[RMDB]
RNA sequence: GGGAACGACUCGAGUAGAGUCGAAAAGAUCUCCGGUUCGCCGGAGAUCAAAGAAGUCACAACGGCUUCCUGACGUGGCAGAUAGAAUUAUUGGAGCAAAAAAAAUCGUUCCCUUCGGGGAACGAAAUCUAGACAACUAGUUCGCUAGUUGUCUAGAAAAAGAAACAACAACAACAAC
Reactivity to 2A3 in 0.01 (KOAc 150mM, MgCl2 10mM, bicine 150mM(pH8.5), 24C), signal-to-noise 3, nucleotides 027 to 126: g000a000u000c000u000c010c000g000g040u040u040c200g030c050c000g030g010a000g010a000u000c000a000a000a000g010a030a020g000u010c000a010c030a080a080c120g090g010c010u220u050c020c020u030g010a020c050g010u020g000g000c020a010g040a160u170a080g170a120a130u180u090a060u110u170g000g020a030g000c000a000a000a000a000a010a010a000a130u000c000g000u000u000c000c000c000u010u020c170g070g010g000g020a000a000c000g000a000a000a000
Reactivity to DMS in 0.01 (KOAc 150mM, MgCl2 10mM, bicine 150mM(pH8.5), 24C), signal-to-noise 2, nucleotides 027 to 126: g010a010u000c000u000c000c000g020g010u000u010c210g030c000c010g000g010a020g000a000u000c000a020a090a080g000a080a120g000u010c020a040c030a060a150c170g020g000c010u000u020c010c020u000g010a130c180g000u000g010g030c040a050g020a130u020a080g010a150a090u010u000a070u020u010g000g010a040g020c050a000a000a010a040a060a070a070a100u000c000g000u000u000c000c000c000u000u010c160g010g000g000g000a000a000c000g000a000a020a040